[RMDB]
RNA sequence: GGGAACGACUCGAGUAGAGUCGAAAAUAUUCUUUCUAUCUGAUCGGACGCUUCUUGCAUGGCUAAAUAUAUUAGUCUAUUUAGUUUCAUGAUCAGUGAUAGCGAGCAUCCAAUGACUAAUAAUAAACAAAGCCAAAUAUUUCGAUAUUUGGCUUUGAAAAGAAACAACAACAACAAC
Reactivity to 2A3 in 0.01 (KOAc 150mM, MgCl2 10mM, bicine 150mM(pH8.5), 24C), signal-to-noise 7, nucleotides 027 to 126: u140a030u080u060c010u010u080u030c010u010a090u010c000u020g030a020u030c030g150g150a150c040g050c050u120u100c050u260u300g010c010a000u020g000g000c000u000a000a000a000u030a000u000a020u010u010a000g010u000c000u000a000u000u000u000a010g010u020u100u250c020a010u030g010a040u020c010a030g030u020g100a010u010a010g030c040g020a010g030c030a060u040c040c020a110a130u080g010a010c000u000a000a010u040a110a050u090a020a070a010
Reactivity to DMS in 0.01 (KOAc 150mM, MgCl2 10mM, bicine 150mM(pH8.5), 24C), signal-to-noise 3, nucleotides 027 to 126: u030a090u030u020c020u000u010u000c010u000a030u010c010u010g000a020u000c010g010g020a090c080g010c020u010u030c160u020u000g000c010a020u000g000g010c010u000a000a010a020u000a020u000a040u000u000a000g000u000c000u000a000u000u000u000a000g000u000u010u030c010a020u010g000a020u010c010a060g000u040g010a020u000a020g000c160g010a040g000c300a090u000c020c020a070a050u050g000a000c000u000a010a000u000a110a100u050a080a080a230